[RMDB]
RNA sequence: GGGAACGACUCGAGUAGAGUCGAAAAGCUCUACGUACGGAAACCAUCCUUGGUAAUGCGAAUCAUAGUGGAUGGGAAAGCAUGCGAGUAGGAGCGAAGUCCCAUCCGAAACGUACGUACUCAAGGAUUCCUAAUAUAGUGUCCGCCAGGUUGUGGCUCAUACAAUUCCUUUCGAGGAAUUGUAUGAAAAAGAAACAACAACAACAAC
Reactivity to 2A3 in 0.01 (KOAc 150mM, MgCl2 10mM, bicine 150mM(pH8.5), 24C), signal-to-noise 4, nucleotides 027 to 156: g010c000u000c010u020a010c020g050u020a030c060g000g060a100a060a010c020c050a030u010c020c010u010u000g010g000u020a030a020u040g000c010g040a070a050u070c070a060u120a210g190u200g090g000a000u000g000g010g030a010a010a010g100c060a080u240g040c040g050a100g130u200a140g100g180a040g030c010g000a040a010g050u000c000c000c000a000u000c000c010g020a030a040a010c010g010u020a000c150g020u010a020c070u090c120a020a000g000g000a020u060u050c010c000u080a150a080u150a060u080a080g140u100g030u160c050c030g020c040c020a020g080g000u010u010g040u030g040g000c010
Reactivity to DMS in 0.01 (KOAc 150mM, MgCl2 10mM, bicine 150mM(pH8.5), 24C), signal-to-noise 2, nucleotides 027 to 156: g030c040u010c000u000a040c060g030u000a080c090g000g030a200a140a020c050c010a070u010c030c020u010u000g040g030u000a040a050u010g000c020g020a080a190u000c050a130u000a210g080u010g030g010a010u000g000g000g020a070a040a120g010c080a120u010g000c050g000a070g030u000a090g010g000a120g000c060g000a150a150g000u000c000c010c010a030u000c000c010g020a010a050a210c020g030u000a050c110g010u010a000c050u010c010a060a040g000g000a080u020u000c070c040u010a110a100u010a120u000a070g030u000g010u000c040c050g030c010c010a170g020g000u010u000g020u000g020g010c020